[RMDB]
RNA sequence: GGGAACGACUCGAGUAGAGUCGAAAAGAUAUGGACGGCCAUGACAUGGGAAACAUUCGGAAACGAAUGCACUCCCAACAGCAUGGACCGUCCUAAGUCAAAACUGCCCAACUUCGGUUGGGCAGAAUCAAAAUCUGGUGUUCGCACCAGAUUUUGAAAAAGAAACAACAACAACAAC
Reactivity to DMS in 0.01 (KOAc 150mM, MgCl2 10mM, bicine 150mM(pH8.5), 24C), signal-to-noise 1, nucleotides 027 to 126: g000a040u000a140u000g000g010a010c000g000g020c010c000a000u000g040a050c050a300u010g000g000g010a040a140a280c000a010u000u020c000g010g010a040a020a090c000g010a020a020u000g000c110a080c300u000c020c000c000a090a070c260a120g000c000a010u040g000g010a090c000c000g030u000c000c000u000a010a030g000u000c040a120a120a140a190c030u000g000c020c000c000a020a000c000u010u040c150g020g050u000u010g000g000g000c000a020g000a030a160
An RNA of 177 nucleotides, treated with DMS and read out base by base.